This 177-nucleotide RNA was probed chemically with 2A3 and DMS. Reactivities are given for positions 27 through 126. The reactions ran in a buffer of 150 mM KOAc, 10 mM MgCl2 and 150 mM bicine (pH 8.5), at 24 C.
RNA sequence: GGGAACGACUCGAGUAGAGUCGAAAAUUGGGAGGCCUGACUACUGGCAGGCGUUGGACAAUAGGUACUGGGUUACAACGGUAGACGACUUAAGGGAAAUAGUAUCUCGUGACUGGACUAAACACAGACAACCCUUACGUUUCGACGUAAGGGUUGUAAAAGAAACAACAACAACAAC
Reactivity to 2A3 in 0.01 (KOAc 150mM, MgCl2 10mM, bicine 150mM(pH8.5), 24C), signal-to-noise 3, nucleotides 027 to 126: u100u060g060g000g010a040g030g020c010c000u030g090a200c070u140a050c060u060g100g000c000a010g000g000c040g040u000u030g010g020a030c040a140a120u070a080g000g070u080a050c020u020g050g070g000u070u040a020c020a090a050c010g020g000u050a030g070a110c030g040a040c010u110u190a080a100g040g000g010a000a060a060u080a030g100u070a100u040c020u000c060g040u040g010a040c000u020g000g030a000c010u070a020a100a000c150a010c020a100g120
Reactivity to DMS in 0.01 (KOAc 150mM, MgCl2 10mM, bicine 150mM(pH8.5), 24C), signal-to-noise 3, nucleotides 027 to 126: u010u000g010g000g050a110g010g030c000c030u000g020a030c080u010a100c140u030g000g020c000a060g020g000c010g000u010u020g000g000a070c100a020a030u000a080g010g000u000a050c060u030g000g030g020u030u010a020c220a090a100c060g000g060u000a040g000a140c070g020a040c100u000u020a060a090g000g000g000a040a030a090u010a150g010u000a100u010c040u000c020g020u020g020a050c060u030g030g000a090c030u030a070a040a050c140a060c170a100g000